[RMDB]
RNA sequence: GGGAACGACUCGAGUAGAGUCGAAAACUUAUGGACCACAUACUCCAGAGUGCCAUGGAUAUCACUCUCAGAUGGCAGGCUGAUUCCUGCUCAAGAUGUAUCAUGGGUUCUAUCCCUGGUCUUGUGCUCGCCCCUAAAUGUUCGCAUUUAGGGGCGAAAAAGAAACAACAACAACAAC
Reactivity to 2A3 in 0.01 (KOAc 150mM, MgCl2 10mM, bicine 150mM(pH8.5), 24C), signal-to-noise 2, nucleotides 027 to 126: c030u120u100a170u230g050g030a030c010c010a110c040a130u080a090c030u000c040c020a000g000a000g040u040g100c030c030a030u040g100g040a030u070a050u170c060a010c070u060c000u020c050a050g040a170u090g030g000c020a010g000g080c050u110g050a140u180u170c000c000u000g040c000u020c010a000a000g030a010u010g090u140a060u200c010a020u070g010g000g000u130u010c080u080a160u200c020c020c000u030g050g010u000c000u010u000g000u010g020c010
Reactivity to DMS in 0.01 (KOAc 150mM, MgCl2 10mM, bicine 150mM(pH8.5), 24C), signal-to-noise 2, nucleotides 027 to 126: c040u000u000a070u000g000g020a050c140c060a070c080a050u000a100c100u000c030c030a020g000a090g010u000g000c080c030a030u010g020g010a080u020a050u000c040a070c090u000c050u010c100a160g010a120u030g000g040c000a020g010g010c300u000g010a230u000u010c000c000u000g000c020u000c030a080a020g000a030u000g000u000a080u000c040a040u010g020g010g020u000u010c190u000a160u000c010c000c000u000g000g000u000c020u000u020g010u010g000c170

An RNA of 177 nucleotides, treated with 2A3 and DMS and read out base by base.
For 2A3, 1,578 sequencing reads were counted.
The reactions ran in a buffer of 150 mM KOAc, 10 mM MgCl2 and 150 mM bicine (pH 8.5), at 24 C.
For 2A3 the reverse transcriptase was SuperScript II with manganese.
The DMS profile rests on 1,527 reads.
Values cover nucleotides 27 to 126.
It was measured as part of the RMDB library OK2TRN.